[RMDB]
RNA sequence: GGGAACGACUCGAGUAGAGUCGAAAAGCGUACUACUCGGUCACAAGCCUUGGAUUUAUGAGUCUCUAGCGUGUCGUUUCCCAAAUAGGAAACGAUCGGGCUCAUUGUCAGGCUUGUACGACCGAGUAUCGCAAAGCGAUUACUUCGGUAAUCGCAAGCCACUAUAAAAGUUCGCUUUUAUAGUGGCAAAAGAAACAACAACAACAAC
Reactivity to DMS in 0.01 (KOAc 150mM, MgCl2 10mM, bicine 150mM(pH8.5), 24C), signal-to-noise 1, nucleotides 027 to 156: g040c020g010u000a040c070u000a030c000u000c000g000g030u010c010a060c000a020a030g020c000c000u000u000g050g020a060u010u000u000a010u000g010a030g000u000c010u010c080u000a150g020c170g010u020g030u010c000g030u000u010u010c000c000c030a040a140a190u000a080g000g000a010a010a010c000g000a000u000c050g000g010g000c000u000c020a020u010u000g000u000c010a040g010g030c010u000u000g000u000a020c080g000a020c000c010g000a030g020u000a000u010c000g000c010a070a110a110g020c000g010a020u000u000a000c000u000u000c300g020g020u000a010a000u000c000g020c010a040a090
Reactivity to 2A3 in 0.01 (KOAc 150mM, MgCl2 10mM, bicine 150mM(pH8.5), 24C), signal-to-noise 7, nucleotides 027 to 156: g000c000g040u070a070c020u000a010c000u020c000g000g010u000c010a000c000a010a000g000c000c020u110u200g210g000a080u240u300u110a030u090g000a020g020u030c060u050c120u260a130g150c110g140u180g010u040c000g000u000u000u010c010c000c000a110a170a020u250a050g000g000a000a000a000c000g010a010u040c030g000g000g000c000u000c000a000u000u000g010u000c000a000g000g010c000u000u000g010u030a050c100g000a000c000c000g000a000g010u000a000u010c000g000c000a030a090a000g000c000g000a000u000u000a000c000u010u100c280g070g010u000a000a000u000c000g000c010a000a000